The record gives the reactivity of an RNA of 177 nucleotides to 2A3 and DMS. For 2A3 the reverse transcriptase was SuperScript II with manganese. For DMS, 15,456 sequencing reads were counted. Reactivities are given for positions 27 through 126. The 2A3 profile rests on 32,090 reads. The reactions ran in a buffer of 150 mM KOAc, 10 mM MgCl2 and 150 mM bicine (pH 8.5), at 24 C.
RNA sequence: GGGAACGACUCGAGUAGAGUCGAAAAGAUAUGGAUCCACCCAGCGAAGUAUAGCGCUCGGAAACGAGACGCUGCGAAGCUGGUGGAUCCUAAGUCAAAGUGAUUUUGCGUUCGCGCAAAAUCACAAGUAUGAACUUAGGUUCGCCUAAGUUCAUACAAAAGAAACAACAACAACAAC
Reactivity to 2A3 in 0.01 (KOAc 150mM, MgCl2 10mM, bicine 150mM(pH8.5), 24C), signal-to-noise 6, nucleotides 027 to 126: g010a010u040a010u090g000g000a000u000c000c010a020c130c180c030a010g000c020g160a300a040g050u090a120u080a190g000c000g000c000u000c010g020g000a030a040a020c010g010a000g130a160c000g000c000u010g000c010g120a110a010g000c010u000g010g000u000g010g000a000u000c000c000u000a010a000g010u000c050a100a070a070g010u010g000a010u020u000u000u000g000c000g020u030u080c300g000c000g000c120a000a000a000a000u000c000a000c000a000a000
Reactivity to DMS in 0.01 (KOAc 150mM, MgCl2 10mM, bicine 150mM(pH8.5), 24C), signal-to-noise 8, nucleotides 027 to 126: g000a030u010a240u000g000g000a010u000c000c000a010c130c070c070a010g010c000g000a130a280g010u010a080u000a020g010c000g020c010u000c010g000g000a050a050a090c000g000a010g000a120c000g020c000u000g010c050g010a100a230g000c000u010g000g030u000g000g000a000u000c000c000u000a010a060g000u000c020a080a110a140g010u000g000a020u000u000u000u000g010c000g010u000u010c240g030c000g020c000a000a000a000a000u000c000a000c010a020a070